[RMDB]
Annotation
Chemical mapping of a 177-nucleotide RNA with DMS and 2A3. The reactions ran in a buffer of 150 mM KOAc, 10 mM MgCl2 and 150 mM bicine (pH 8.5), at 24 C. The 2A3 profile rests on 1,989 reads. 2A3 is a SHAPE reagent: it acylates the 2'-hydroxyl of flexible nucleotides of all four kinds. The DMS profile rests on 2,865 reads. High DMS reactivity at an A or C suggests that its Watson-Crick edge is free.
RNA sequence: GGGAACGACUCGAGUAGAGUCGAAAAGAAAAAAGAGCAGUGGGAAUAGGAGCUGUACUCCUUGGGUUCUUGGGAGCAGCAGGAAGCACUAUGGGCGCAGCGUCAUUGACGCUGACGGUACAGGCCAGAGAUUAAAGAAGUUCGCUUCUUUAAUCUCAAAAGAAACAACAACAACAAC
Reactivity to DMS in 0.01 (KOAc 150mM, MgCl2 10mM, bicine 150mM(pH8.5), 24C), signal-to-noise 3, nucleotides 027 to 126: g000a030a040a090a100a090a110g010a060g020c040a070g010u000g010g010g020a070a080u010a060g010g000a070g000c060u010g000u010a230c050u000c020c020u000u010g000g000g010u000u000c050u000u000g000g020g000a050g000c040a050g020c040a050g020g010a090a060g000c070a050c070u000a100u000g010g010g010c060g000c030a010g010c010g020u020c010a170u000u000g010a020c020g010c010u000g010a030c060g030g010u010a070c070a040g010g000c050c080a170
Reactivity to 2A3 in 0.01 (KOAc 150mM, MgCl2 10mM, bicine 150mM(pH8.5), 24C), signal-to-noise 2, nucleotides 027 to 126: g040a010a110a030a000a020a010g070a040g000c050a010g010u060g020g040g050a100a050u080a150g030g010a030g020c040u050g060u120a090c010u030c000c020u020u030g090g020g000u160u080c050u080u090g030g000g000a030g010c000a010g000c000a000g040g030a050a030g020c030a020c060u060a110u110g040g030g010c040g000c000a010g000c000g000u010c070a300u040u300g000a000c000g000c010u000g010a020c000g010g000u070a030c020a010g050g000c010c000a010